[RMDB]
RNA sequence: GGGAACGACUCGAGUAGAGUCGAAAAGUCCGGUCGUGAACUGCGCGGCUAUGAUGCCAUGACGGCGGCUUAUGCCCAUGCCAGAAAGACACGGAGGAUGGCACAAUGACGGAAGAUUUAUUUGGUGGUUUUGUGCUGUUUUCGAACAGCACAAAACAAAAGAAACAACAACAACAAC
Reactivity to 2A3 in 0.01 (KOAc 150mM, MgCl2 10mM, bicine 150mM(pH8.5), 24C), signal-to-noise 1, nucleotides 027 to 126: g030u000c010c030g030g030u020c000g020u010g090a080a040c040u070g010c070g010c030g060g000c000u010a140u260g050a100u070g050c000c000a030u110g030a090c160g020g030c000g050g000c020u120u070a040u170g030c020c010c010a040u090g000c020c020a060g030a060a120a020g020a010c020a030c120g000g050a000g030g010a020u050g040g020c030a030c050a090a070u100g030a040c050g030g020a070a000g000a140u030u300u030a140u000u280u210g180g000u170g020
Reactivity to DMS in 0.01 (KOAc 150mM, MgCl2 10mM, bicine 150mM(pH8.5), 24C), signal-to-noise 1, nucleotides 027 to 126: g010u000c020c020g020g010u000c010g000u010g000a110a150c090u010g000c060g010c080g010g010c010u030a100u010g030a100u000g000c020c010a100u030g020a110c140g030g000c000g000g000c010u000u000a040u030g010c020c040c120a150u010g010c040c010a030g010a090a140a090g010a060c030a090c080g030g010a070g000g000a070u010g020g000c030a030c080a010a080u000g010a060c070g000g020a090a020g020a110u020u000u000a120u000u000u000g010g070u000g020
The record gives the reactivity of an RNA of 177 nucleotides to 2A3 and DMS. Values cover nucleotides 27 to 126. For 2A3 the reverse transcriptase was SuperScript II with manganese. The 2A3 profile rests on 721 reads. For DMS the reverse transcriptase was MarathonRT. Conditions: 150 mM KOAc, 10 mM MgCl2 and 150 mM bicine (pH 8.5), 24 C. The DMS profile rests on 1,080 reads.